This 177-nucleotide RNA was probed chemically with DMS and 2A3. Source: RMDB library M2PK50, as collected in RNAgym. The RNA was probed in 150 mM KOAc, 10 mM MgCl2 and 150 mM bicine (pH 8.5) at 24 C. Reactivities are given for positions 27 through 126. The 2A3 profile rests on 903 reads.

[RMDB]
RNA sequence: GGGAACGACUCGAGUAGAGUCGAAAAUUACCUCCCUUCGGGGAGGUAAACUGAACGCUGCAAGCGGCAGGGCGCUCGCUUGCGCACACACGCACAAUAAAAGCAGUAUGCACUUCGGUGCAUACAAUUCUUAGCGAUGUUUCGACAUCGCUAAGAAAAAAGAAACAACAACAACAAC
Reactivity to DMS in 0.01 (KOAc 150mM, MgCl2 10mM, bicine 150mM(pH8.5), 24C), signal-to-noise 2, nucleotides 027 to 126: u010u000a020c000c000u000c010c010c010u000u010c300g010g000g000g000a000g030g010u000a000a000a080c070u010g010a080a080c180g010c020u000g030c030a010a040g000c000g000g040c010a120g000g010g000c250g020c010u050c050g040c000u010u000g010c000g010c050a060c020a120c170a090c080g030c170a060c230a060a150u030a060a070a080a080g000c230a140g010u000a010u010g000c000a010c000u000u010c190g060g000u000g000c000a000u000a000c030a050a070
Reactivity to 2A3 in 0.01 (KOAc 150mM, MgCl2 10mM, bicine 150mM(pH8.5), 24C), signal-to-noise 1, nucleotides 027 to 126: u000u010a010c010c000u070c030c000c000u050u050c270g020g000g000g020a000g000g040u020a010a000a020c030u040g070a070a000c070g000c040u190g000c030a000a010g000c000g010g010c060a090g230g150g110c100g010c020u060c050g000c100u030u020g000c030g020c000a030c000a000c000a030c000g180c000a010c050a200a090u180a110a200a030a020g000c030a000g030u010a000u000g000c010a000c020u040u120c300g090g010u010g030c000a000u000a000c000a000a050